Structure probing data (2A3) for a 177-nucleotide construct. For 2A3, 727 sequencing reads were counted. The reactions ran in a buffer of 150 mM KOAc, 10 mM MgCl2 and 150 mM bicine (pH 8.5), at 24 C.
RNA sequence: GGGAACGACUCGAGUAGAGUCGAAAAUCUUCUUGACCUGGUCAGAUUUUUUCCAUAAAGGACCAUUUCCUAUCUGCCUGGAGCCUGGGGUUCUGAGAGCUUAGUGGAAGAAAAAUGGCGAUGGGGAGGCACAUGUACCAUUCGUGGUACAUGUGCCAAAAGAAACAACAACAACAAC
Reactivity to 2A3 in 0.01 (KOAc 150mM, MgCl2 10mM, bicine 150mM(pH8.5), 24C), signal-to-noise 2, nucleotides 027 to 126: u000c000u170u010c010u070u090g110a020c000c040u060g030g000u050c000a040g020a160u000u140u000u000u000u000c010c000a050u080a030a150a000g130g030a000c030c040a080u040u020u020c000c000u040a110u040c060u080g040c040c000u080g070g020a020g000c030c070u100g060g020g020g070u000u000c000u040g080a070g000a000g030c040u010u000a050g020u010g050g020a030a000g040a030a050a010a010a010u070g060g000c050g090a090u050g010g000g000g050a010